[RMDB]
RNA sequence: GGGAACGACUCGAGUAGAGUCGAAAAGACACACUAGACACCUCCCAGGUCCUCGUGUGUACCUGGUUGAGAGGCUCAUUGCUUGUGAAAAUCCAUUCAUGGUUAACCAAUUGGCUUAUAGCUCUAGAUCGUCAAUUGUUCGCAAUUGACAAAAGAAACAACAACAACAAC
Reactivity to 2A3 in 0.01 (KOAc 150mM, MgCl2 10mM, bicine 150mM(pH8.5), 24C), signal-to-noise 9, nucleotides 027 to 129: g040a000c010a000c010a000c040u020a000g020a010c020a030c030c010u030c020c020c010a000g010g010u040c010c030u110c090g130u140g020u030g000u110a040c000c000u000g000g000u110u210g060a060g010a020g050g010c010u030c030a070u040u090g030c050u090u110g020u020g080a060a050a040a070u060c040c020a060u060u140c050a080u140g060g010u090u110a030a030c020c010a050a060u060u050g010g000c010u070u090a080u080a120g020c010u000c010u030a050g010a140u110c060
Reactivity to DMS in 0.01 (KOAc 150mM, MgCl2 10mM, bicine 150mM(pH8.5), 24C), signal-to-noise 7, nucleotides 027 to 129: g000a020c040a000c040a000c040u050a020g000a020c070a070c060c020u040c030c010c000a100g020g010u000c020c010u050c260g040u070g000u050g030u000a050c000c000u010g000g050u010u060g040a000g030a080g000g000c060u030c080a090u020u030g010c100u070u040g000u000g070a080a070a090a080u020c050c070a060u040u040c090a080u060g050g000u030u030a070a070c170c030a060a060u010u000g000g040c000u030u030a020u050a080g030c040u040c030u000a050g010a100u060c160